RNA sequence: GGGAACGACUCGAGUAGAGUCGAAAAGAUAUGGACUAAGGCCGAAGAACUAUGUAACAAGUAUCGGAAACGAUACCGCCCAUAGGGAGGCUAUGUCCUAAGUCAAAGACAUGCUUCGGCAUGUCAACGUAGAUAAUUGCUUCGGCAAUUAUCUACGAAAAGAAACAACAACAACAAC
Reactivity to DMS in 0.01 (KOAc 150mM, MgCl2 10mM, bicine 150mM(pH8.5), 24C), signal-to-noise 4, nucleotides 027 to 126: g020a060u000a300u010g000g000a030c010u010a100a200g000g010c000c000g020a070a130g020a110a130c020u000a010u000g010u030a070a100c200a140a120g010u010a000u000c000g000g000a120a050a200c030g010a020u010a000c010c040g010c300c110c010a010u000a010g020g000g000a030g040g030c000u000a280u040g000u000c000c010u000a030a080g010u000c060a030a070a090g000a000c010a000u000g000c000u000u020c150g030g000c000a000u000g010u000c000a030a060
Reactivity to 2A3 in 0.01 (KOAc 150mM, MgCl2 10mM, bicine 150mM(pH8.5), 24C), signal-to-noise 1, nucleotides 027 to 126: g010a030u100a040u100g020g000a000c030u100a200a280g080g000c010c020g190a260a020g020a020a010c010u020a000u090g070u220a130a080c090a210a090g000u000a000u000c010g030g000a110a040a020c010g000a010u000a000c000c010g050c030c020c010a010u020a010g000g000g030a020g000g000c000u020a030u090g000u000c000c020u000a150a030g060u030c050a240a000a000g020a000c000a010u020g000c000u070u080c210g100g000c010a000u000g000u000c010a010a010
Record summary: Chemical mapping of a 177-nucleotide RNA with DMS and 2A3. The reactions ran in a buffer of 150 mM KOAc, 10 mM MgCl2 and 150 mM bicine (pH 8.5), at 24 C. Values cover nucleotides 27 to 126. For 2A3, 6,847 sequencing reads were counted. It was measured as part of the RMDB library TTRDEL.